About this RNA
The data come from the RNA Mapping Database (RMDB), library M2PK90. Chemical mapping of a 177-nucleotide RNA with DMS. Values cover nucleotides 27 to 126. The reactions ran in a buffer of 150 mM KOAc, 10 mM MgCl2 and 150 mM bicine (pH 8.5), at 24 C. The DMS profile rests on 1,032 reads.
RNA sequence: GGGAACGACUCGAGUAGAGUCGAAAAACAAAUACUCACGCUGCUAGGCGGGUGCGCACUGCUGUCUGGCCCGGCGCCGCGCUAGGGCGCACACCUAGGGUUGCAAAGGGUAACCGGGCUGAAAAAAUCAAAACCAAAUGUUCGCAUUUGGUUUUGAAAAAGAAACAACAACAACAAC
Reactivity to DMS in 0.01 (KOAc 150mM, MgCl2 10mM, bicine 150mM(pH8.5), 24C), signal-to-noise 2, nucleotides 027 to 126: a050c100a060a100a180u000a040c010u000c020a110c290g000c060u010g000c070u000a110g010g030c110g020g020g010u000g010c010g000c020a070c000u000g010c000u010g040u000c050u000g010g000c000c030c040g010g010c210g020c010c050g010c000g000c000u000a010g000g000g030c040g010c050a010c050a090c040c010u000a030g010g020g030u000u020g000c040a080a200a180g010g000g000u020a080a110c040c040g010g000g000c020u020g020a000a030a070a080a090a070